[RMDB]
RNA sequence: GGGAACGACUCGAGUAGAGUCGAAAAUGGCCUUUUCGCUGGUACUCAUGGCGGAAAACUCCGCUUCGCUCAUGGUGUCGAACGGGCUUUCAGCCGGUGGCCGGAUGGCAUCGUAAAUGGCCUUACGCUACUGCCUGUAGUUCGCUACAGGCAGUAGAAAAGAAACAACAACAACAAC
Reactivity to 2A3 in 0.01 (KOAc 150mM, MgCl2 10mM, bicine 150mM(pH8.5), 24C), signal-to-noise 3, nucleotides 027 to 126: u060g020g000c000c000u030u000u020u030c030g000c050u050g040g020u160a300c010u000c070a130u150g000g020c040g020g030a020a020a010a040c060u050c040c000g030c210u030u030c010g000c010u070c050a190u260g200g030u090g170u190c000g010a020a000c000g000g000g000c000u040u010u000c000a020g000c000c020g030g030u030g030g030c010c010g000g020a130u140g050g060c040a060u090c070g050u080a050a060a030u080g020g000c000c010u000u040a090c100g000
Reactivity to DMS in 0.01 (KOAc 150mM, MgCl2 10mM, bicine 150mM(pH8.5), 24C), signal-to-noise 4, nucleotides 027 to 126: u000g010g010c020c010u010u000u000u000c040g010c030u000g010g020u000a060c050u000c040a100u000g010g010c010g010g010a010a010a020a050c040u010c010c020g010c270u000u000c020g020c040u010c190a130u000g010g020u010g010u010c010g020a030a040c020g000g000g020c040u000u000u000c020a060g010c010c010g010g020u000g000g010c000c010g010g010a100u010g020g000c100a060u010c070g000u010a030a040a070u010g010g010c000c010u000u000a090c170g010

Chemical mapping of a 177-nucleotide RNA with 2A3 and DMS. DMS adducts were read by reverse transcription with MarathonRT. For 2A3, 4,641 sequencing reads were counted. It was measured as part of the RMDB library OK2TRN.